RNA sequence: GGGAACGACUCGAGUAGAGUCGAAAAGAUAUGGAGCAGAACUACAGUCCCUGGUGUUAAUAAGCGAGGUACUCGGAAACGAGUACUACCCACCGCUUAUUAACACCACCACUGCUGCUCCUAAGUCCCGUAGUUAUAACUUCGGUUAUAACUACGGAAAAGAAACAACAACAACAAC
Reactivity to 2A3 in 0.01 (KOAc 150mM, MgCl2 10mM, bicine 150mM(pH8.5), 24C), signal-to-noise 2, nucleotides 027 to 126: g100a030u160a080u300g010g000a010g000c020a010g010a160a080c190u300a110c300a010g030u000c000c000c000u000g000g000u010g000u000u000a010a000u010a010a010g000c000g000a010g000g000u010a000c010u000c000g030g010a060a090a030c000g000a010g000u000a000c000u010a000c030c020c010a080c030c000g000c010u000u000a010u000u000a010a000c000a000c020c010a010c000c010a010c000u020g000c000u000g000c000u000c000c000u020a170a020g110u060c000
Reactivity to DMS in 0.01 (KOAc 150mM, MgCl2 10mM, bicine 150mM(pH8.5), 24C), signal-to-noise 4, nucleotides 027 to 126: g000a130u000a290u000g010g020a000g000c000a010g000a070a010c110u020a300c020a020g000u000c040c030c030u000g000g020u000g020u000u000a020a000u000a000a010g010c000g000a040g010g000u000a010c000u000c000g000g000a110a080a230c010g000a020g000u010a000c000u000a030c070c040c110a300c160c000g000c010u010u000a000u000u000a010a000c000a000c000c000a000c110c120a030c000u000g000c020u000g020c000u010c000c010u000a020a100g000u000c060
The record gives the reactivity of an RNA of 177 nucleotides to 2A3 and DMS. The RNA was probed in 150 mM KOAc, 10 mM MgCl2 and 150 mM bicine (pH 8.5) at 24 C.